An RNA of 177 nucleotides, treated with DMS and 2A3 and read out base by base.
RNA sequence: GGGAACGACUCGAGUAGAGUCGAAAACUACGUUUUAGGACGAAAGCCAAUUAUGAGCUUGGGUCUCGAGCAAUUUUCCAGCGUUCAUUUGCAGACAGCUGGUGUUGCUGUGGGUGGUGCAGUGGGACUAAUCGAGCUAGUUCGCUAGCUCGAUUAGAAAAGAAACAACAACAACAAC
Reactivity to DMS in 0.01 (KOAc 150mM, MgCl2 10mM, bicine 150mM(pH8.5), 24C), signal-to-noise 4, nucleotides 027 to 126: c050u010a090c130g010u000u000u000u010a120g010g000a040c030g000a140a050a040g010c010c020a110a130u010u010a120u000g000a100g000c030u000u000g010g000g010u000c050u000c110g010a040g010c020a020a010u000u000u010u000c010c000a020g020c010g000u010u000c040a160u010u010u010g010c240a150g000a030c030a060g030c000u000g010g010u010g000u000u000g010c010u010g020u000g000g000g010u000g010g010u000g020c120a110g010u000g000g010g000a180
Reactivity to 2A3 in 0.01 (KOAc 150mM, MgCl2 10mM, bicine 150mM(pH8.5), 24C), signal-to-noise 3, nucleotides 027 to 126: c010u060a040c030g020u050u030u050u270a110g020g060a040c030g070a110a000a000g020c010c020a050a040u300u130a200u260g050a020g030c020u020u030g070g040g010u050c030u020c090g000a010g000c000a010a010u070u040u230u050c000c010a010g010c010g040u030u090c060a150u110u110u300g130c020a040g010a060c020a050g000c000u000g000g050u010g010u030u000g020c030u020g000u070g020g020g030u120g010g060u120g000c000a020g020u150g050g000g040a020
For DMS, 5,337 sequencing reads were counted. Values cover nucleotides 27 to 126. The RNA was probed in 150 mM KOAc, 10 mM MgCl2 and 150 mM bicine (pH 8.5) at 24 C.